The record gives the reactivity of an RNA of 177 nucleotides to DMS and 2A3. For 2A3 the reverse transcriptase was SuperScript II with manganese. For DMS, 1,862 sequencing reads were counted. The RNA was probed in 150 mM KOAc, 10 mM MgCl2 and 150 mM bicine (pH 8.5) at 24 C. DMS adducts were read by reverse transcription with MarathonRT.

RNA sequence: GGGAACGACUCGAGUAGAGUCGAAAACACUGAUGGGUUUGAAAAGGAGUACCUGGAAAGUGCUGAUAAUUUGUCAUGGGACAAGCACUGGUUUUGGGAACCAAGCAAGACAGCGUGGGGCUCUCUGCAUUUACCCUCCGUUCGCGGAGGGUAAAUGAAAAGAAACAACAACAACAAC
Reactivity to DMS in 0.01 (KOAc 150mM, MgCl2 10mM, bicine 150mM(pH8.5), 24C), signal-to-noise 2, nucleotides 027 to 126: c040a100c070u000g020a080u010g010g030g010u010u020u000g000a110a080a080a060g030g000a110g010u000a070c030c030u000g010g010a080a070a060g000u000g020c040u000g010a120u020a070a080u000u020u000g010u000c020a170u010g040g000g000a040c070a050a060g000c010a040c030u000g000g000u010u010u030u000g020g020g030a140a100c070c050a070a110g020c050a070a080g010a080c060a010g020c080g010u000g010g000g010g020c050u000c030u000c050u010g010
Reactivity to 2A3 in 0.01 (KOAc 150mM, MgCl2 10mM, bicine 150mM(pH8.5), 24C), signal-to-noise 1, nucleotides 027 to 126: c020a010c040u100g040a100u120g030g020g010u040u070u160g220a140a130a020a000g040g020a070g020u070a150c010c040u040g050g020a080a030a000g010u020g000c000u020g040a180u050a300a140u140u060u170g040u000c070a140u140g240g040g160a040c070a030a000g000c000a000c050u010g020g070u020u080u150u060g080g020g040a040a000c040c000a040a000g050c020a000a030g040a100c070a040g030c000g020u090g020g020g010g020c010u000c010u010c030u000g000